[RMDB]
RNA sequence: GGGAACGACUCGAGUAGAGUCGAAAAGGGUUAGCGUUCGCGCUAACCCCAGGAUCGAACAUGUCAAAUCUCGCAGACAUCAAACGAUCAAAAGCGAGAAAACUAGACAGUCAUUCGUGACUGUCAACUAUGAAUCCACUUUCGAGUGGAUUCAUAGAAAAGAAACAACAACAACAAC
Reactivity to 2A3 in 0.01 (KOAc 150mM, MgCl2 10mM, bicine 150mM(pH8.5), 24C), signal-to-noise 4, nucleotides 027 to 126: g000g000g000u000u010a000g010c010g000u030u060c250g000c010g000c110u000a000a000c020c000c000c010a050g010g100a070u110c070g040a070a050c040a100u060g020u040c030a010a070a260u030c040u020c010g000c010a010g010a030c000a020u040c050a070a170a110c080g030a020u090c030a010a100a040a030g010c000g000a000g000a030a050a010a040c080u060a040g000a010c000a010g000u000c010a010u040u090c200g090u020g000a000c000u000g000u000c010a000a010
Reactivity to DMS in 0.01 (KOAc 150mM, MgCl2 10mM, bicine 150mM(pH8.5), 24C), signal-to-noise 3, nucleotides 027 to 126: g000g010g020u000u000a000g020c000g040u000u010c210g030c010g000c000u000a020a020c020c000c000c010a020g000g010a090u020c030g020a090a140c200a060u000g010u020c020a070a070a090u000c000u000c020g060c020a110g000a060c070a040u000c170a070a110a110c140g020a040u000c080a050a050a100a130g020c000g000a000g030a020a070a050a030c190u000a100g000a000c010a010g010u000c000a020u010u010c210g030u000g010a020c000u000g010u010c010a050a110